[RMDB]
RNA sequence: GGGAACGACUCGAGUAGAGUCGAAAACACACCUGGAAACUAUGCAUGCCUAACAGAGAAGUGUACUCCACCCCCGCCGCUACCCUUACCAGUUGUGGACUAAACAGUAUUGCACAUGACGGUGCCCCCAACAGAAGUAUUGACUGCAUGCUAAUUAAUUUUACCGUAAAUUCGUUUACGGUAAAAUAAAAGAAACAACAACAACAAC
Reactivity to 2A3 in 0.01 (KOAc 150mM, MgCl2 10mM, bicine 150mM(pH8.5), 24C), signal-to-noise 1, nucleotides 027 to 156: c040a020c030a030c010c010u040g000g090a040a050a060c100u010a080u130g010c000a010u010g000c030c000u080a150a070c060a040g150a010g070a300a110g030u040g010u090a090c040u100c010c010a020c000c000c030c030c000g010c050c010g000c040u030a000c000c000c000u090u010a050c000c040a060g000u000u000g030u050g070g020a010c020u010a110a070a040c040a010g050u120a130u130u140g040c050a030c030a020u060g000a110c140g080g000u050g010c080c000c000c000c030a030a080c010a030g060a080a000g040u040a030u010u290g010a020c000u040g070c010a050u010g000c010u030a060a020u050u110a030
Reactivity to DMS in 0.01 (KOAc 150mM, MgCl2 10mM, bicine 150mM(pH8.5), 24C), signal-to-noise 2, nucleotides 027 to 156: c050a070c060a080c050c010u000g020g000a170a090a070c060u000a130u000g010c020a050u000g000c030c020u000a050a190c090a120g030a100g010a090a110g010u010g040u000a070c050u000c010c020a130c010c000c030c000c040g010c020c000g020c030u000a090c030c010c030u020u000a070c030c010a130g020u000u010g040u000g010g000a180c050u000a090a060a100c060a120g030u020a170u000u000g010c000a050c040a120u020g000a060c040g030g000u010g010c020c020c010c010c010a090a170c060a080g000a070a080g030u000a050u010u010g020a080c060u000g010c010a060u000g000c020u000a040a060u000u000a040